[RMDB]
RNA sequence: GGGAACGACUCGAGUAGAGUCGAAAAGAUAGCGUUUCACAAUGUGCGCCAUUAACAUUGUUUAUGCAAGCACGUUUCGCAAUGUACGGCGCAGAAACAUUGCCAACACAAAUACGCUUCACGAUGUAAAACAUCGGUGCGUUCGCGCACCGAUGAAGCAUACCUUGAAGUUCGCUUCAAGGUAUGCAAAAGAAACAACAACAACAAC
Reactivity to 2A3 in 0.01 (KOAc 150mM, MgCl2 10mM, bicine 150mM(pH8.5), 24C), signal-to-noise 6, nucleotides 027 to 156: g100a030u150a010g000c000g000u010u090u150c120a060c020a030a020u020g010u030g030c000g010c000c000a060u130u170a050a010c000a010u010u020g090u060u130u110a100u130g060c090a070a110g100c070a040c170g020u030u100u120c070g020c000a000a010u020g000u010a020c070g000g000c000g000c010a000g040a010a070a000c010a010u000u030g050c060c070a180a010c050a050c030a080a130a050u120a030c020g010c000u040u080c060a040c060g080a050u130g040u260a020a080a040a070c000a000u010c000g010g000u000g000c010g000u020u050c190g000c000g000c070a000c000c010g000a000u000g010a000a020
Reactivity to DMS in 0.01 (KOAc 150mM, MgCl2 10mM, bicine 150mM(pH8.5), 24C), signal-to-noise 2, nucleotides 027 to 156: g030a160u000a040g020c030g010u020u000u000c060a100c020a100a060u010g010u000g020c010g020c050c020a160u000u000a120a080c030a060u000u000g010u000u000u000a060u010g000c060a160a240g010c120a090c100g000u000u000u000c170g020c020a040a010u000g030u000a020c120g000g000c030g030c010a060g010a090a090a100c040a050u000u000g010c000c030a070a060c040a080c110a060a070a110u000a050c020g000c010u000u010c060a110c040g010a190u010g000u000a080a060a130a220c000a000u000c000g040g020u000g020c000g040u000u000c300g100c040g000c000a000c000c000g030a000u000g000a020a080